Structure probing data (2A3) for a 207-nucleotide construct. The data come from the RNA Mapping Database (RMDB), library RNAMAK. The 2A3 profile rests on 1,547 reads. The reactions ran in a buffer of 150 mM KOAc, 10 mM MgCl2 and 150 mM bicine (pH 8.5), at 24 C.
RNA sequence: GGGAACGACUCGAGUAGAGUCGAAAACUACGUUUCGACGUAGAAAAAAACCUUUGUGGUAAGGGAGCUGAGUGGGUGGUGAUCCCAUUGGGAUCACGUAACAUCCCAUCCAGCUUUGAUCUUACCACUCUGGUAAAAACUCGUCUUCGGACGAGAACGUAGCGUGCAGAUUCGUCUGCACGCUACGAAAAGAAACAACAACAACAAC
Reactivity to 2A3 in 0.01 (KOAc 150mM, MgCl2 10mM, bicine 150mM(pH8.5), 24C), signal-to-noise 2, nucleotides 027 to 156: c010u020a000c020g010u000u070u250c300g090a040c000g000u050a010g220a080a170a010a000a000a000a000c010c000u000u010u000g000u010g000g000u000a010a000g030g010g010a000g020c000u020g010a010g050u010g000g000g000u010g030g000u000g000a000u000c010c010c090a300u180u300g000g000g010a000u000c000a000c000g000u010a050a000c010a170u160c000c000c000a030u040c000c000a010g000c000u080u020u000g000a000u010c000u000u000a000c000c000a000c000u000c000u000g000g000u130a110a100a010a000a000c010u000c000g030u000c000u030u040c270g070g010a000c000g020a010g010a000a000